[RMDB]
RNA sequence: GGGAACGACUCGAGUAGAGUCGAAAAGGAGAACGGCAUUGUGUUUCCCUCUCCACGUUUUGCAGGCCUUAGGGUCCUGCGUGCCGCACGGCACUCGUUCGCGCUUUUGCUUGAGAAUGAACUGCGGCGGAUACGUCGGGUUCGCCCGACGUAUCCGAAAAGAAACAACAACAACAAC
Reactivity to DMS in 0.01 (KOAc 150mM, MgCl2 10mM, bicine 150mM(pH8.5), 24C), signal-to-noise 1, nucleotides 027 to 126: g020g000a000g000a060a130c180g010g000c130a170u020u060g000u000g010u010u010u000c000c000c020u000c010u000c000c000a090c110g030u000u000u000u010g010c000a020g000g000c030c000u000u020a180g000g000g060u020c020c000u010g000c080g000u030g000c000c010g010c120a110c300g000g000c140a110c030u010c000g060u000u020c060g000c040g000c110u020u030u000u030g000c010u000u050g000a050g000a000a050u000g000a030a130c050u020g000c010g050g000
Reactivity to 2A3 in 0.01 (KOAc 150mM, MgCl2 10mM, bicine 150mM(pH8.5), 24C), signal-to-noise 2, nucleotides 027 to 126: g020g000a040g000a090a050c100g050g030c100a230u190u270g170u110g000u130u130u080c000c000c000u000c010u020c000c000a070c110g080u000u000u000u270g030c020a000g030g010c020c010u120u200a210g110g000g000u200c020c010u000g000c000g010u010g000c000c010g020c010a020c000g070g000c020a050c050u010c020g090u010u060c070g010c010g030c060u050u090u150u240g020c030u080u190g060a050g000a270a140u090g030a050a020c040u040g000c020g060g000